[RMDB]
The record gives the reactivity of an RNA of 177 nucleotides to 2A3 and DMS. The DMS profile rests on 68,998 reads. The data come from the RNA Mapping Database (RMDB), library OK2TRN. For 2A3 the reverse transcriptase was SuperScript II with manganese. The RNA was probed in 150 mM KOAc, 10 mM MgCl2 and 150 mM bicine (pH 8.5) at 24 C.
RNA sequence: GGGAACGACUCGAGUAGAGUCGAAAAGGUGGCGCACGCCUGUAAUCCCUCUACUCAAGAGGCUGAGACAGGAGAAUCACUUGAACUCAGGAGGCGGAGAUUGCAGUGAGCCGAGAUCACGCCACUGCACAUAUAGCAGAUUCGUCUGCUAUAUGUGAAAAGAAACAACAACAACAAC
Reactivity to 2A3 in 0.01 (KOAc 150mM, MgCl2 10mM, bicine 150mM(pH8.5), 24C), signal-to-noise 9, nucleotides 027 to 126: g010g000u010g010g000c030g000c040a030c070g030c010c000u000g010u030a030a050u020c010c060c000u010c020u070a170c060u070c060a090a060g050a040g250g000c060u060g020a010g010a030c010a020g020g060a080g110a100a140u150c040a030c070u030u050g100a200a040c010u000c030a020g040g040a040g040g040c060g030g010a100g010a060u040u080g000c020a020g050u030g150a040g040c040c040g060a050g000a080u130c050a010c050g000c000c010a010c020u040g000
Reactivity to DMS in 0.01 (KOAc 150mM, MgCl2 10mM, bicine 150mM(pH8.5), 24C), signal-to-noise 9, nucleotides 027 to 126: g010g020u000g000g020c110g020c090a100c100g010c020c000u000g010u000a060a110u000c090c010c000u000c020u000a120c100u010c110a130a070g010a060g010g020c050u000g000a060g010a200c030a030g000g010a090g000a150a090u010c130a060c030u000u000g010a070a090c020u000c020a040g000g010a060g000g010c180g010g000a070g000a050u000u000g000c020a040g000u000g000a090g020c050c070g000a140g000a080u000c120a120c050g010c010c000a020c020u000g010